[RMDB]
RNA sequence: GGGAACGACUCGAGUAGAGUCGAAAAGCACUAAUCAGCUACAGUCGCAGUAUCAAUCAUGACACUGUGCGUAAUGUUAGCCAUGACUGUGGCUAAUUGACUAUGUACAACGUACUGUGCAGUGCGUUAACUGACACCACACGUGAUGCUAUGCAACCUAAAGAGCGAGUUUCGACUCGCUCUUUAGAAAAGAAACAACAACAACAAC
Reactivity to 2A3 in 0.01 (KOAc 150mM, MgCl2 10mM, bicine 150mM(pH8.5), 24C), signal-to-noise 8, nucleotides 027 to 156: g020c000a010c050u070a050a050u070c040a010g050c070u070a030c020a090g040u090c030g000c020a010g000u040a010u110c070a110a090u150c100a180u200g020a020c010a010c060u020g000u030g020c000g010u060a100a100u150g020u040u030a010g000c030c000a110u190g080a240c180u300g020u010g020g000c000u010a000a010u020u050g040a030c050u050a040u180g050u050a050c020a060a000c090g010u010a010c000u030g020u040g050c030a010g010u010g010c000g000u020u040a080a060c020u050g070a040c020a030c060c030a050c020a010c080g040u050g020a040u070g020c030u050a030u190g040c030a050a050c000
Reactivity to DMS in 0.01 (KOAc 150mM, MgCl2 10mM, bicine 150mM(pH8.5), 24C), signal-to-noise 3, nucleotides 027 to 156: g040c020a080c020u010a090a260u000c060a040g020c030u000a020c040a100g040u010c020g040c010a030g050u010a020u010c020a090a180u010c200a200u000g000a010c020a040c010u000g020u000g040c070g000u000a060a120u010g020u000u000a040g010c020c010a070u000g030a150c160u010g040u000g020g020c000u000a010a040u000u000g010a120c060u010a060u010g020u000a060c040a060a090c100g030u000a030c030u000g010u000g030c290a040g020u010g000c020g010u010u010a040a100c050u020g000a120c030a090c030c020a040c020a050c130g000u000g000a080u010g010c000u000a090u010g010c070a050a100c100